[RMDB]
RNA sequence: GGGAACGACUCGAGUAGAGUCGAAAACGCCCCGCCCGGUCGGGAUGGGCCGCAGUUCCCGACGAGGAGCCCGCAGGUGGGAGGAUCAGCCACCGGAGGGGACGCGAUGCCAAAGAGUGGGGGAAAUGUUAUUAUCCUAGUUCGCUAGGAUAAUAACAAAAGAAACAACAACAACAAC
Reactivity to 2A3 in 0.01 (KOAc 150mM, MgCl2 10mM, bicine 150mM(pH8.5), 24C), signal-to-noise 2, nucleotides 027 to 126: c030g030c010c000c000c000g020c020c000c010g180g160u170c080g030g020g060a060u020g050g020g000c010c020g000c030a040g010u020u010c010c010c000g000a020c010g040a070g050g000a030g040c020c000c010g020c090a070g000g060u050g010g000g050a080g050g030a090u080c010a040g070c010c000a030c030c000g010g050a020g010g010g000g000a010c010g000c010g030a030u110g050c020c000a030a070a030g080a050g070u090g010g000g000g000g040a010a050a060u060
Reactivity to DMS in 0.01 (KOAc 150mM, MgCl2 10mM, bicine 150mM(pH8.5), 24C), signal-to-noise 4, nucleotides 027 to 126: c160g010c100c010c000c040g020c000c010c010g030g020u020c110g020g010g000a040u000g000g010g010c060c030g000c070a170g000u000u000c000c000c000g010a080c040g010a140g010g010a160g010c010c010c020g030c120a170g000g010u000g010g000g010a090g010g020a090u000c090a140g010c010c030a020c030c010g000g000a300g010g000g010g000a060c050g010c060g000a120u000g010c030c050a100a100a080g010a100g010u000g010g000g010g000g000a110a100a150u010